[RMDB]
RNA sequence: GGGAACGACUCGAGUAGAGUCGAAAAAGCUGGUUUUAAAGUUCAUAUGGAAAUAUUAAGGAACGAGAAUAGCCUGACAAAUUUGAAAAACAAGAACAAAGUUAGAGAGGUCUAACAUCACCUGACUUGAAGACAUAUAUAGCCACAGUAAACAAGAUGAGGUCAUAAAUUUCGAUUUAUGACCUCAAAAAGAAACAACAACAACAAC
Reactivity to 2A3 in 0.01 (KOAc 150mM, MgCl2 10mM, bicine 150mM(pH8.5), 24C), signal-to-noise 1, nucleotides 027 to 156: a000g070c040u040g000g030u060u010u020u070a050a120a030g000u030u100c010a000u000a050u200g080g040a040a090a020u120a180u140u200a110a110g030g000a030a030c050g010a030g000a150a030u020a000g020c000c030u020g000a030c060a040a070a030u160u180u190g020a150a010a000a000a000c010a060a000g150a020a000c020a070a060a030g000u080u110a010g020a010g000a000g150g000u000c010u070a020a010c060a000u000c060a010c030c020u060g030a090c010u010u070g000a060a010g030a010c010a000u060a020u030a000u100a120g050c030c090a030c010a010g050u110a070a070a110c040a040a000g300a070
Reactivity to DMS in 0.01 (KOAc 150mM, MgCl2 10mM, bicine 150mM(pH8.5), 24C), signal-to-noise 1, nucleotides 027 to 156: a090g000c100u000g000g060u000u000u000u000a070a000a150g020u000u000c050a150u000a120u000g020g000a090a120a100u000a100u010u000a060a130g000g010a060a160c030g000a100g000a010a130u000a140g010c010c020u010g030a160c060a090a080a160u000u000u000g000a070a050a120a030a100c110a040a100g020a010a110c090a060a040a070g000u020u000a060g030a090g000a070g010g000u000c040u000a030a050c100a110u000c030a040c020c030u000g000a020c000u000u000g030a100a090g020a100c030a020u030a140u000a170u020a070g060c000c010a020c020a040g000u000a010a040a110c060a130a030g000a120

Structure probing data (2A3 and DMS) for a 207-nucleotide construct.
Conditions: 150 mM KOAc, 10 mM MgCl2 and 150 mM bicine (pH 8.5), 24 C.
Source: RMDB library OK3TST, as collected in RNAgym.
As a SHAPE reagent, 2A3 marks flexible, mostly unpaired nucleotides at the ribose 2'-OH.